The record gives the reactivity of an RNA of 170 nucleotides to DMS and 2A3. It was measured as part of the RMDB library 15KLIB. The reactions ran in a buffer of 150 mM KOAc, 10 mM MgCl2 and 150 mM bicine (pH 8.5), at 24 C.
[RMDB]
RNA sequence: GGGAACGACUCGAGUAGAGUCGAAAAUUGAAGGUAAAACAGCCUGUGGGUGAAACACACCCACAGGGCCCAUUGGGCGCUAGCACUCUGGUAUCACGGUACCUUUGUGCGCCUGUAUUACCGAAGGCUAGGUAACAGUUCGCUGUUACCAAAAGAAACAACAACAACAAC
Reactivity to DMS in 0.01 (KOAc 150mM, MgCl2 10mM, bicine 150mM(pH8.5), 24C), signal-to-noise 9, nucleotides 027 to 129: u020u050g010a160a090g000g010u000a000a010a070a010c010a010g000c000c000u010g010u000g000g000g000u000g030a100a130a100c230a180c000a000c010c000c010a000c000a030g000g020g030c000c000c000a040u040u110g010g010g010c020g000c010u070a020g060c000a010c010u010c020u010g000g020u010a000u010c030a130c250g050g010u010a020c010c040u000u040u000g000u000g020c000g000c000c030u010g000u000a060u000u000a010c000c000g000a080a080g040g010c110u050a070
Reactivity to 2A3 in 0.01 (KOAc 150mM, MgCl2 10mM, bicine 150mM(pH8.5), 24C), signal-to-noise 9, nucleotides 027 to 129: u110u120g070a080a020g000g000u000a020a010a000a000c000a000g000c000c000u000g000u010g000g000g000u010g030a050a090a010c120a010c000a000c050c000c000a000c010a000g000g000g000c000c000c000a040u260u300g000g000g000c010g000c090u110a050g000c010a000c000u000c000u000g000g000u010a000u020c020a050c240g120g000u000a000c000c000u010u000u000g000u000g000c000g000c000c000u000g000u000a060u000u000a000c000c000g000a030a010g100g020c080u120a030
DMS adducts were read by reverse transcription with MarathonRT.
High DMS reactivity at an A or C suggests that its Watson-Crick edge is free.
Values cover nucleotides 27 to 129.
For 2A3 the reverse transcriptase was SuperScript II with manganese.